RNA sequence: GGGAACGACUCGAGUAGAGUCGAAAAGGUCAGGCCUGAUCGGAAACAGCAGCAGGUGAGUCCACCUUAUGUGAAGGAUCGGCUGAAACACGAGGAAAUACUGAGCCAACGCAAGACGGUAGCCGAAAAAAUCUAGUUCACUUCGGUGAACUAGAAAGUCUUGCUACUUCUUCGGAAGUAGCAAGACAAAAGAAACAACAACAACAAC
Reactivity to 2A3 in 0.01 (KOAc 150mM, MgCl2 10mM, bicine 150mM(pH8.5), 24C), signal-to-noise 2, nucleotides 027 to 156: g060g030u010c020a020g020g080c020c000u130g040a050u040c020g060g070a130a030a040c020a010g120c000a000g010c010a000g000g030u050g020a050g070u080c090c000a010c010c000u090u070a080u090g060u050g050a080a010g040g000a020u080c050g010g000c010u020g070a060a010a000c110a030c030g000a040g050g080a090a100a030u100a060c060u120g020a020g050c020c070a060a020c060g020c030a050a090g030a000c010g050g000u060a030g030c020c040g080a090a020a000a000a000a000u030c000u000a000g000u000u000c000a000c000u030u030c090g050g000u000g010a000a000c000u010a000g010a000a000a000